The record gives the reactivity of an RNA of 170 nucleotides to 2A3 and DMS. High DMS reactivity at an A or C suggests that its Watson-Crick edge is free. The RNA was probed in 150 mM KOAc, 10 mM MgCl2 and 150 mM bicine (pH 8.5) at 24 C. The data come from the RNA Mapping Database (RMDB), library 15KLIB.
RNA sequence: GGGAACGACUCGAGUAGAGUCGAAAAAAACAGGAGGAGGAUCGGUAGAAAAGAGCGAGACCUCCGAUUCGAGAGCUCCUGGACUCCUCGGCUCUGGAGUCCUCCGACCCGUGAGGUCGAGGAUCCCGCAGCGUGGGCUUCGGCCCACGCAAAAGAAACAACAACAACAAC
Reactivity to 2A3 in 0.01 (KOAc 150mM, MgCl2 10mM, bicine 150mM(pH8.5), 24C), signal-to-noise 3, nucleotides 027 to 129: a000a000a020c000a000g010g000a010g010g020a030g000g000a000u000c000g010g030u170a020g070a040a100a060a000g140a030g110c110g050a090g080a110c000c030u000c020c000g000a010u010u010c020g020a040g010a030g230c000u000c000c000u010g000g020a060c040u030c010c010u000c010g010g000c000u000c010u030g010g000a080g040u010c000c020u010c050c070g060a060c000c000c000g040u090g030a130g070g000u010c000g000a000g020g000a040u010c030c000c000g000c050a010
Reactivity to DMS in 0.01 (KOAc 150mM, MgCl2 10mM, bicine 150mM(pH8.5), 24C), signal-to-noise 3, nucleotides 027 to 129: a100a010a090c000a050g000g020a050g100g030a000g030g000a020u030c030g000g030u070a080g040a010a030a010a010g080a170g090c140g010a120g050a260c000c010u020c000c000g000a010u060u000c020g030a060g040a160g020c010u010c020c000u020g020g000a100c000u010c150c030u000c020g010g000c000u020c010u050g030g010a070g020u010c010c070u000c120c000g040a000c070c000c070g030u050g000a160g010g040u050c000g020a060g020g010a050u010c020c010c020g020c190a040